[RMDB]
RNA sequence: GGGAACGACUCGAGUAGAGUCGAAAACGGUGCACUGCGGUACAUGAUAUGCAUGUAUGGCAUGAGCACUGGAACCGGAAACAGUGCUCUAGUCUAUAGUGAGGCCUUUAGGCAGAAGAUGCGAGACACUACCUUCCGUCUUCGGGCGGAGGGUAGUAAAAGAAACAACAACAACAAC
Reactivity to DMS in 0.01 (KOAc 150mM, MgCl2 10mM, bicine 150mM(pH8.5), 24C), signal-to-noise 9, nucleotides 027 to 126: c040g000g010u000g010c040a080c030u000g000c010g000g010u000a020c050a030u010g000a220u050a090u040g020c020a020u000g010u010a020u010g000g010c010a090u020g020a040g020c000a010c000u000g000g000a080a090c040c030g000g010a110a090a090c070a030g010u010g000c010u010c000u010a170g000u010c010u000a070u020a080g010u020g010a120g010g010c050c010u000u020u020a090g010g010c010a050g010a070a050g000a050u010g000c040g000a080g010a110c190
Reactivity to 2A3 in 0.01 (KOAc 150mM, MgCl2 10mM, bicine 150mM(pH8.5), 24C), signal-to-noise 9, nucleotides 027 to 126: c010g030g020u030g000c030a010c060u020g000c020g080g010u020a010c010a040u040g060a100u140a070u300g180c020a000u010g010u050a020u050g140g000c010a030u090g010a010g010c000a000c000u000g010g020a030a050c030c010g020g020a080a100a010c020a020g020u010g030c000u000c000u010a040g010u000c030u030a070u020a080g090u080g130a070g060g050c010c000u060u110u090a080g020g000c010a010g040a100a010g030a030u080g020c020g030a020g020a030c050